[RMDB]
An RNA of 207 nucleotides, treated with DMS and 2A3 and read out base by base.

RNA sequence: GGGAACGACUCGAGUAGAGUCGAAAAACGAAACCCAAGGUGCAUGCCGAGGUGCGUUAGGCCUCGUUAACAAACCGCAAAAAAAUAGUCGCAAACGACGAAAACUACGCACUCGCAGCUUAAUAACAGUAGGGUCCCUACUUCGGUAGGGACCCAAUCGGAUGUAUAGUUUCGACUAUACAUCCGAAAAAGAAACAACAACAACAAC
Reactivity to DMS in 0.01 (KOAc 150mM, MgCl2 10mM, bicine 150mM(pH8.5), 24C), signal-to-noise 1, nucleotides 027 to 156: a180c050g000a170a030a150c000c010c020a060a300g000g000u010g000c080a080u000g000c050c010g000a120g040g000u000g010c040g000u020u010a100g000g000c000c040u000c020g030u000u010a140a150c000a030a050a040c050c080g000c050a000a000a050a090a140a080a200u000a130g000u020c060g020c200a070a180a030c000g100a030c020g010a010a040a080a070c030u000a050c010g050c030a100c050u000c030g040c090a060g030c070u010u000a110a050u010a050a070c060a150g010u010a110g010g110g070u000c000c000c000u000a010c010u000u000c190g000g010u000a000g020g000g000a000c010c000c000a010a030
Reactivity to 2A3 in 0.01 (KOAc 150mM, MgCl2 10mM, bicine 150mM(pH8.5), 24C), signal-to-noise 2, nucleotides 027 to 156: a030c040g040a050a000a000c010c000c030a020a010g170g060u110g010c130a140u060g010c150c060g010a050g040g080u050g040c000g030u060u090a040g010g040c000c000u020c000g030u030u050a030a040c010a120a050a100c070c080g010c060a060a030a000a040a000a000a140u190a020g050u040c070g000c090a160a010a090c040g000a000c010g020a000a000a050a000c030u000a000c000g010c000a000c000u010c010g010c010a010g000c010u160u150a090a060u140a170a090c050a040g150u210a250g020g000g020u000c000c000c000u000a000c000u000u100c140g070g000u000a000g020g020g030a000c010c020c000a000a000
High DMS reactivity at an A or C suggests that its Watson-Crick edge is free. Conditions: 150 mM KOAc, 10 mM MgCl2 and 150 mM bicine (pH 8.5), 24 C.